Source information:
An RNA of 207 nucleotides, treated with DMS and 2A3 and read out base by base. DMS adducts were read by reverse transcription with MarathonRT. 2A3 adducts were read by reverse transcription with SuperScript II with manganese. High 2A3 reactivity points to a flexible backbone, as in loops and unpaired stretches.
RNA sequence: GGGAACGACUCGAGUAGAGUCGAAAAGAUGGCCAUGUUUCAAACUUACACCGGCAGCACAAACUACGUGCCGUUCUACACCAAGAUUUUUGACGUGCUCUACAAUAUCGCCUGCACCGCCAACAUUCUAUCGACCAUAGUGUACUUUAUCACGACGGCGUUUACGUAGAUUCGUCUACGUAAACGCAAAAGAAACAACAACAACAAC
Reactivity to DMS in 0.01 (KOAc 150mM, MgCl2 10mM, bicine 150mM(pH8.5), 24C), signal-to-noise 1, nucleotides 027 to 156: g060a080u000g000g000c030c040a110u000g020u000u000u000c120a220a080a200c060u010u000a040c020a090c110c000g040g000c000a050g020c050a100c050a090a090a170c090u020a050c070g020u000g040c040c000g000u010u000c010u010a080c080a100c060c050a040a060g020a120u000u000u010u000u050g050a140c050g030u000g010c020u010c060u000a070c060a000a090u000a100u000c070g030c020c050u020g030c030a060c050c030g060c030c020a010a080c040a100u010u010c040u000a060u000c000g020a050c000c000a050u010a060g050u000g000u000a080c070u010u000u010a030u000c070a030c040g010a040c030g020
Reactivity to 2A3 in 0.01 (KOAc 150mM, MgCl2 10mM, bicine 150mM(pH8.5), 24C), signal-to-noise 5, nucleotides 027 to 156: g070a040u110g030g000c040c030a030u070g030u030u080u060c140a150a150a080c060u090u100a030c030a040c060c050g020g000c030a020g040c030a010c060a080a160a070c100u190a100c130g050u060g010c000c020g010u040u020c020u050a030c030a030c050c030a070a110g020a130u060u090u060u080u190g070a050c060g020u060g040c020u010c010u060a040c060a120a050u070a070u210c080g030c030c010u040g010c020a030c010c020g030c030c000a030a040c020a060u060u100c010u080a080u080c050g060a030c030c010a040u040a050g010u040g010u070a080c030u100u100u090a120u170c050a020c090g090a000c050g070
Values cover nucleotides 27 to 156.